RNA sequence: GGGAACGACUCGAGUAGAGUCGAAAACCUGCCAGAGAGGGCUUUUGGUUUAUCCUAUCUGCUGUGGUUUAUGUACAAUUCGAAAGUCAUAUGCAACGGCAGAUAGGAGCAAUCAUUAGCCACAAAGAAGGUAUGACAGAUUCGUCUGUCAUACCUUAAAAGAAACAACAACAACAAC
Reactivity to 2A3 in 0.01 (KOAc 150mM, MgCl2 10mM, bicine 150mM(pH8.5), 24C), signal-to-noise 6, nucleotides 027 to 126: c000c000u040g070c090c050a080g090a010g050a190g150g030g000c010u000u000u000u010g010g000u000u000u020a060u000c000c000u000a000u000c000u000g000c000u000g010u000g030g050u030u040u000a010u010g120u110a020c040a130a220u110u150c110g190a120a060a040g010u000c000a010u000a000u010g000c020a010a000c000g000g000c000a000g000a000u000a000g000g000a000g000c000a000a000u000c000a000u000u000a000g000c000c000a020c020a010a070a010g190
Reactivity to DMS in 0.01 (KOAc 150mM, MgCl2 10mM, bicine 150mM(pH8.5), 24C), signal-to-noise 3, nucleotides 027 to 126: c010c020u030g020c230c210a140g020a200g010a120g040g000g020c000u000u000u010u010g020g020u000u010u030a090u030c030c000u010a000u000c000u000g020c020u000g000u000g000g000u010u000u010a010u000g000u060a000c000a040a090u030u020c300g030a140a170a080g000u000c040a000u010a000u020g000c000a020a050c000g020g010c020a000g010a000u000a000g000g000a000g000c170a010a000u000c000a000u000u000a000g030c010c000a040c040a090a110a070g010